[RMDB]
RNA sequence: GGGAACGACUCGAGUAGAGUCGAAAAAUUGGACCUGAAAUGAACAUGAUGUGUCUAGUAUUCCUCCUUUCCUGACUCAGGACCUUCCUACACAUGAGUUGACCUUAGACCACUUAAUGCUGAAAGAAAUGUAUCCAUGUACCAAGUUAAAUGACUAUAAUCCGCUCAUAUUCGUAUGAGCGGAUUAAAAAGAAACAACAACAACAAC
Reactivity to 2A3 in 0.01 (KOAc 150mM, MgCl2 10mM, bicine 150mM(pH8.5), 24C), signal-to-noise 1, nucleotides 027 to 156: a000u050u050g050g050a020c040c040u060g020a130a050a050u110g010a090a090c010a060u120g010a040u040g040u070g040u110c040u050a050g000u060a060u020u030c010c000u100c000c040u010u060u070c000c040u070g080a120c010u010c050a000g050g030a010c000c000u000u070c000c000u060a030c160a000c010a050u060g010a060g060u010u000g070a060c000c000u070u030a050g040a090c010c010a020c000u020u040a070a020u060g010c010u010g040a010a140a090g090a000a020a010u080g010u010a070u020c000c010a000u010g050u050a080c050c000a020a000g030u070u050a050a080a050u300g000a020c120u090a010
Reactivity to DMS in 0.01 (KOAc 150mM, MgCl2 10mM, bicine 150mM(pH8.5), 24C), signal-to-noise 2, nucleotides 027 to 156: a110u000u000g000g010a070c010c010u010g010a090a050a140u000g010a050a080c080a130u010g010a100u000g020u010g050u010c030u000a090g010u010a130u000u000c040c000u000c030c050u000u000u000c020c000u000g010a110c070u000c040a090g020g010a110c080c020u000u000c030c010u010a080c030a070c040a070u020g010a100g040u000u000g000a070c040c040u010u010a090g010a120c010c020a090c030u000u010a060a040u000g010c020u000g030a110a070a100g000a040a070a040u010g000u000a090u010c040c050a110u000g000u000a100c020c030a040a230g000u000u000a040a080a110u000g000a090c070u010a290